This 207-nucleotide RNA was probed chemically with 2A3.

[RMDB]
RNA sequence: GGGAACGACUCGAGUAGAGUCGAAAACAGAUGGCUGGAUGUGAAAGAGACAUGCUCUAGCUGCAGAGGCAAAUUUGAAGUGCCACGGAACGUUGUCAAGAGGUAGUGAGAUUGUUGCUGUGAGCAAGGCUCUGGGAGAGUCACCUCAGGCUCAGGAGACCCUAAUCCCAUUCGUGGGAUUAGGGUCAAAAGAAACAACAACAACAAC
Reactivity to 2A3 in 0.01 (KOAc 150mM, MgCl2 10mM, bicine 150mM(pH8.5), 24C), signal-to-noise 2, nucleotides 027 to 156: c040a000g080a130u120g060g000c060u020g000g000a100u050g030u060g070a140a030a030g100a010g060a070c010a080u050g040c000u020c020u030a050g000c050u080g010c040a000g070a090g070g000c040a040a030a080u180u150u100g070a110a000g020u030g050c010c040a050c040g000g040a020a030c120g040u080u040g030u100c050a110a020g020a020g110g010u070a040g020u060g080a090g000a120u060u100g010u070u070g040c020u050g040u040g040a030g000c050a010a050g020g000c000u030c010u020g030g080g000a050g010a000g030u040c000a060c040c030u100c060a050g040g000c050u040c020a040g090g090a090
The RNA was probed in 150 mM KOAc, 10 mM MgCl2 and 150 mM bicine (pH 8.5) at 24 C. Reactivities are given for positions 27 through 156.